[RMDB]
RNA sequence: GGGAACGACUCGAGUAGAGUCGAAAAUUGUAGACCAUAUAGGGUAAUUUUCUUACGUUGUCAUGGCAUUUGCAAACUGUCAUAGGGCUGGUGAGAGUGUCUUUUAGUAUGCUAAUGCAUUCAUUAUAAUUAGCAUAUAAUGAGCAGUGAGCAGGACACUUCAUUUAUGGUUCGCCAUAAAUGAAGUAAAAGAAACAACAACAACAAC
Reactivity to 2A3 in 0.01 (KOAc 150mM, MgCl2 10mM, bicine 150mM(pH8.5), 24C), signal-to-noise 4, nucleotides 027 to 156: u090u070g050u040a040g040a090c020c070a040u120a050u100a230g050g020g040u100a080a100u080u120u090u060c020u030u080a080c070g100u040u060g040u070c060a060u060g040g000c020a040u010u020u170g050c030a090a090a060c030u020g040u070c010a040u060a090g050g000g000c050u050g050g010u070g040a070g010a010g010u040g020u040c010u010u090u010u010a060g030u030a030u020g010c010u020a010a020u030g040c030a040u050u100c020a010u000u190a040u030a150a080u030u040a010g020c000a010u010a010u010a040a100u100g040a010g000c010a000g030u040g060a020g020c020a010g050g000a020c040
Reactivity to DMS in 0.01 (KOAc 150mM, MgCl2 10mM, bicine 150mM(pH8.5), 24C), signal-to-noise 4, nucleotides 027 to 156: u000u010g020u010a090g010a150c020c010a110u000a130u010a130g020g030g000u010a040a050u010u000u000u000c050u010u000a090c060g030u000u000g030u000c030a130u000g010g030c040a100u000u000u000g020c060a070a090a110c090u000g010u000c020a080u000a130g040g010g030c020u010g010g010u000g020a120g000a120g030u010g010u000c020u000u000u000u000a160g020u000a040u010g010c010u000a030a030u000g010c080a180u000u000c110a070u010u000a120u000a070a090u010u000a070g010c040a060u000a010u000a070a100u000g010a100g010c040a080g010u000g010a120g020c040a070g000g010a130c110

This 207-nucleotide RNA was probed chemically with 2A3 and DMS.
The DMS profile rests on 10,292 reads.
The reactions ran in a buffer of 150 mM KOAc, 10 mM MgCl2 and 150 mM bicine (pH 8.5), at 24 C.